[RMDB]
RNA sequence: GGGAACGACUCGAGUAGAGUCGAAAACAUACUUAAGCAGAGGAGGCUACACAACAGCCUUGAAGUCCUUCACAAAAGCCAGUGAGCUGAACCCAGAAUCCAUAUACAGUGUGUUUAAGGUUGCAGCAAUACAGCAAAUCCUAGGCAAAUAUAAGGAGACCUUAGAAUUCUUCGGAAUUCUAAGGUCAAAAGAAACAACAACAACAAC
Reactivity to 2A3 in 0.01 (KOAc 150mM, MgCl2 10mM, bicine 150mM(pH8.5), 24C), signal-to-noise 1, nucleotides 027 to 156: c030a010u230a050c050u210u210a040a030g020c000a000g030a030g000g100a000g010g000c030u070a050c080a000c060a270a000c070a010g000c000c020u000u020g010a000a000g070u040c000c050u050u110c040a150c110a240a120a000a030g010c050c030a020g020u000g110a040g000c010u010g050a020a020c000c000c000a000g100a010a000u130c000c090a060u120a020u010a190c030a100g010u050g000u000g020u090u040u000a030a050g030g000u030u130g150c000a000g010c000a000a050u170a110c000a010g030c000a000a060a160u050c000c000u000a040g090g060c030a020a060a090u300a020u270a010a050g000g030a010